This 207-nucleotide RNA was probed chemically with 2A3.
[RMDB]
RNA sequence: GGGAACGACUCGAGUAGAGUCGAAAAAGCACGGUGUUUGAGGACGCAUUUUGUCCGUGCGGUAAUGCCCUCCUUUACACUUUCUCGCAUGGUGCGGGAGUGUGGAGAGGAAACAAAAGCUAGUCUCGAUAGGCGGUUAACUUCGGUUAACCGCCAACCUAAAGUAGCGCUUCGGCGCUACUUUAGGAAAAGAAACAACAACAACAAC
Reactivity to 2A3 in 0.01 (KOAc 150mM, MgCl2 10mM, bicine 150mM(pH8.5), 24C), signal-to-noise 1, nucleotides 027 to 156: a000g040c000a000c000g010g040u040g030u100u030u000g100a070g000g040a030c030g050c100a150u060u000u000u010g010u000c000c010g000u000g000c040g010g040u140a120a040u150g090c010c000c000u000c000c020u000u070u040a010c000a000c000u080u130u030c000u030c000g080c060a140u300g290g000u230g110c000g020g010g000a050g000u020g000u000g000g000a060g000a010g000g010a080a040a000c070a000a000a000a000g040c060u080a060g000u010c030u000c080g060a090u050a040g000g000c000g000g020u000u000a020a000c000u010u130c230g040g000u010u000a000a000c010c000g010c000c000a000a000

Source: RMDB library M2RFOK, as collected in RNAgym. For 2A3, 670 sequencing reads were counted.